[RMDB]
RNA sequence: GGGAACGACUCGAGUAGAGUCGAAAAGAUAUGGAUACUCCUGCCGACGAAGAACUUAAUUCGGAAACGAAUUAAGGGAGUCGACAGGAGGUAUCCUAAGUCAAACGAAGAGCUUCGGCUCUUCGAACUUGACUAUGUACUUCGGUACAUAGUCAAGAAAAGAAACAACAACAACAAC
Reactivity to 2A3 in 0.01 (KOAc 150mM, MgCl2 10mM, bicine 150mM(pH8.5), 24C), signal-to-noise 2, nucleotides 027 to 126: g030a010u120a040u270g010g000a000u010a020c000u000c000c000u010g040c060c010g010a020c010g180a300a150g000a080a010c000u010u010a000a010u020u000c010g050g000a010a070a080c010g010a000a010u010u010a000a020g020g000g010a010g000u000c000g010a020c030a000g000g030a000g000g010u000a000u000c000c000u010a100a010g060u000c080a150a050a110c030g010a010a000g010a000g010c020u100u160c300g200g000c010u030c000u000u000c010g000a020a030
Reactivity to DMS in 0.01 (KOAc 150mM, MgCl2 10mM, bicine 150mM(pH8.5), 24C), signal-to-noise 4, nucleotides 027 to 126: g010a070u010a300u000g000g000a010u000a020c000u000c000c010u010g010c000c010g010a010c010g000a100a180g030a150a240c000u000u000a000a000u000u010c000g000g020a130a130a230c010g020a020a010u000u000a000a020g000g010g020a060g020u000c010g010a000c000a000g000g000a000g000g010u000a010u000c000c000u000a040a110g020u000c070a080a130a300c030g010a020a010g020a020g010c000u000u020c250g030g010c000u000c000u000u010c010g000a030a130
Structure probing data (2A3 and DMS) for a 177-nucleotide construct. Conditions: 150 mM KOAc, 10 mM MgCl2 and 150 mM bicine (pH 8.5), 24 C. The 2A3 profile rests on 6,503 reads. The data come from the RNA Mapping Database (RMDB), library TTRDES.